[RMDB]
RNA sequence: GGGAACGACUCGAGUAGAGUCGAAAACUUGUUCGGACGUGUUUAGGUGUUGCUGCUUGAUGAGAUCGUUGAAGCGCAUUUUCAAGUCGCGGAUCUUCUGCAACGGCGUAGAAAAGUCCAGACUGUAACCAAAGGCCUGAAUGGCGGUCAACAGAUCCGUAAUCAGCAGGUUCGCCUGCUGAUUACGAAAAGAAACAACAACAACAAC
Reactivity to DMS in 0.01 (KOAc 150mM, MgCl2 10mM, bicine 150mM(pH8.5), 24C), signal-to-noise 1, nucleotides 027 to 156: c020u010u000g000u010u000c050g000g000a020c050g040u000g020u010u020u020a150g030g010u010g000u000u010g000c020u020g000c000u010u000g020a130u000g010a100g000a080u000c030g020u010u050g020a060a110g000c010g020c070a220u000u000u000u000c050a100a100g030u010c040g060c050g040g000a290u020c100u000u000c050u020g020c000a130a060c140g060g010c100g000u000a030g010a020a010a060a070g000u000c020c050a070g010a000c020u000g010u010a090a190c130c070a050a110a230g000g020c000c000u050g020a020a090u000g000g030c020g030g000u000c030a080a080c070a130g030a130u010c040
Reactivity to 2A3 in 0.01 (KOAc 150mM, MgCl2 10mM, bicine 150mM(pH8.5), 24C), signal-to-noise 2, nucleotides 027 to 156: c020u070u080g020u090u030c060g070g090a080c030g110u060g100u100u160u120a110g000g020u020g070u190u080g020c020u030g000c050u040u060g000a110u060g010a030g050a100u050c030g020u050u040g080a060a010g060c020g020c090a090u000u010u070u110c120a090a090g050u070c000g000c090g040g010a000u000c030u070u000c000u080g060c000a030a150c130g070g000c060g010u030a060g050a050a100a000a030g040u000c000c000a000g000a060c020u030g020u080a040a060c020c030a040a180a100g020g000c000c000u060g000a040a020u120g140g000c020g000g060u020c030a030a040c010a060g040a090u130c050